RNA sequence: GGGAACGACUCGAGUAGAGUCGAAAAGUGCUAUAAAAUAUGACGAACUAAAAACAUACGGAAUAUAAUUCGUUACCGUUUUUGUGAUAAUAAUUAGAUUUUACAAGUAACGAAAGGAAAAACGGUGACCAGUGCAGGUAUUCGUACCUGCACUGGUAAAAGAAACAACAACAACAAC
Reactivity to DMS in 0.01 (KOAc 150mM, MgCl2 10mM, bicine 150mM(pH8.5), 24C), signal-to-noise 1, nucleotides 027 to 126: g000u020g000c000u000a090u000a050a080a040a050u000a000u000g000a010c070g030a180a080c120u020a000a070a030a080a090c120a030u000a260c080g020g000a100a040u040a030u000a040a160u000u000c000g020u020u020a000c060c060g000u000u000u030u000u000g000u040g100a110u030a050a050u030a050a110u070u000a020g050a190u000u000u000u000a000c090a040a090g000u000a080a000c080g010a000a000a160g040g030a000a080a090a000a130c000g040g020u000g000
Reactivity to 2A3 in 0.01 (KOAc 150mM, MgCl2 10mM, bicine 150mM(pH8.5), 24C), signal-to-noise 2, nucleotides 027 to 126: g060u010g090c100u070a150u120a300a050a020a070u080a120u070g060a000c050g020a070a150c070u180a180a000a000a090a000c170a010u210a170c140g090g090a140a000u270a060u000a080a240u000u010c020g000u030u050a000c000c000g010u000u040u000u070u080g080u000g030a100u050a140a190u210a010a100u030u110a040g010a030u020u030u020u020a000c000a130a080g000u020a000a250c090g000a000a050a100g110g000a000a030a000a090a000c030g000g000u000g000
An RNA of 177 nucleotides, treated with DMS and 2A3 and read out base by base.
It was measured as part of the RMDB library OK1LIB.
Reactivities are given for positions 27 through 126.
For 2A3 the reverse transcriptase was SuperScript II with manganese.